RNA sequence: GGGAACGACUCGAGUAGAGUCGAAAAUCAAGCCGUUUCGACGGCUUGAACACUUUAGAGUCCUGAGGGACUACGAUCCAGAGUACGGGAGCAACUCUAAGGCCUAGCCCUGCUUCGGCAGGGCUAACUUGUGAAAUACUUUCGAGUAUUUCACAAGAAAAGAAACAACAACAACAAC
Reactivity to DMS in 0.01 (KOAc 150mM, MgCl2 10mM, bicine 150mM(pH8.5), 24C), signal-to-noise 5, nucleotides 027 to 126: u000c000a010a000g020c000c000g010u000u000u010c160g010a040c010g020g000c000u000u000g000a020a080c200a140c030u000u000u000a040g000a030g010u000c010c000u000g000a160g010g000g000a040c020u000a050c210g010a120u000c020c020a140g010a140g000u000a120c060g010g010g000a110g010c080a180a100c020u000c010u000a030a020g000g010c030c030u000a020g000c010c000c000u000g010c000u000u010c200g020g010c010a010g000g000g000c010u000a000a040
Reactivity to 2A3 in 0.01 (KOAc 150mM, MgCl2 10mM, bicine 150mM(pH8.5), 24C), signal-to-noise 4, nucleotides 027 to 126: u010c000a000a000g000c000c000g020u000u030u120c200g100a030c000g000g020c000u000u010g000a000a010c010a000c010u030u030u020a020g000a010g020u010c010c020u020g020a160g030g030g020a010c020u140a150c210g160a210u000c000c020a030g010a050g260u120a080c030g010g000g000a020g040c030a050a030c000u020c010u030a010a020g030g000c010c000u000a010g000c000c000c000u000g000c000u030u040c140g060g010c000a000g060g020g000c000u000a010a000